[RMDB]
Source: RMDB library OK2TST, as collected in RNAgym. Chemical mapping of a 177-nucleotide RNA with 2A3 and DMS. The reactions ran in a buffer of 150 mM KOAc, 10 mM MgCl2 and 150 mM bicine (pH 8.5), at 24 C. For 2A3, 599 sequencing reads were counted. 2A3 adducts were read by reverse transcription with SuperScript II with manganese.
RNA sequence: GGGAACGACUCGAGUAGAGUCGAAAAAGCUAAAGAAAUGCAAAAUGUUCCAUAUACAAUUGCAGUAGAUGGCAUUAUGGCUUUCAAUCAAUCUUACUUAAAUUUACCAAAAGAUAGCCAAUUAUCAACUGUUCACAGCAUUCGUGCUGUGAACAGUAAAAGAAACAACAACAACAAC
Reactivity to 2A3 in 0.01 (KOAc 150mM, MgCl2 10mM, bicine 150mM(pH8.5), 24C), signal-to-noise 1, nucleotides 027 to 126: a000g010c010u040a050a050a000g030a040a100a010u170g010c000a070a060a030a000u040g020u160u060c040c010a000u080a000u010a010c060a080a050u200u220g000c090a010g010u010a010g000a060u000g000g000c030a050u090u020a060u120g050g000c020u000u070u010c000a030a030u160c010a090a050u000c010u050u070a010c000u050u090a170a050a170u070u190u150a090c000c000a000a000a000a140g010a080u010a000g140c000c030a040a080u160u100a070u100c080a040
Reactivity to DMS in 0.01 (KOAc 150mM, MgCl2 10mM, bicine 150mM(pH8.5), 24C), signal-to-noise 1, nucleotides 027 to 126: a020g010c120u000a100a120a110g030a080a020a060u010g010c010a040a050a110a040u010g020u020u000c060c050a080u000a030u030a000c010a080a130u000u030g020c210a270g030u000a030g030a020u000g000g020c020a030u000u000a020u000g000g000c010u000u000u000c000a040a190u000c160a040a030u020c090u000u030a100c050u020u000a060a080a180u000u010u000a190c040c050a000a070a050a090g000a030u000a030g020c060c210a040a070u000u000a130u000c120a100